[RMDB]
RNA sequence: GGGAACGACUCGAGUAGAGUCGAAAAGGGGUCACACGCAGAUACCGGCAACGCAUCGAUCUACACUGAAGCCUCCACGGUGUAGGGAGCGUUGACGGUGUAGUGUGACGGAGGCACCCAAAAGCGUUUUAUCAUUGUUCGCAAUGAUAAAACGCAAUCAACACCACUGGUUCGCCAGUGGUGUUGAAAAAGAAACAACAACAACAAC
Reactivity to 2A3 in 0.01 (KOAc 150mM, MgCl2 10mM, bicine 150mM(pH8.5), 24C), signal-to-noise 1, nucleotides 027 to 156: g090g000g140g010u030c000a000c010a000c000g160c300a040g050a160u000a010c000c020g000g010c000a000a000c000g010c010a070u300c070g000a000u010c000u000a000c000a000c000u050g030a080a010g010c010c010u000c010c000a000c000g000g000u000g020u010a000g010g000g010a020g000c000g000u010u000g000a010c010g000g000u000g010u010a040g000u000g000u000g000a000c000g010g000a000g000g000c000a030c010c000c000a060a130a000a010g000c000g010u000u000u000u000a010u000c000a000u000u010g060u110u130c300g020c120a000a000u000g000a000u000a000a000a000a010c000g000c000a000a010
An RNA of 207 nucleotides, treated with 2A3 and read out base by base.
Reactivities are given for positions 27 through 156.
For 2A3, 2,372 sequencing reads were counted.
It was measured as part of the RMDB library RNAMAK.
High 2A3 reactivity points to a flexible backbone, as in loops and unpaired stretches.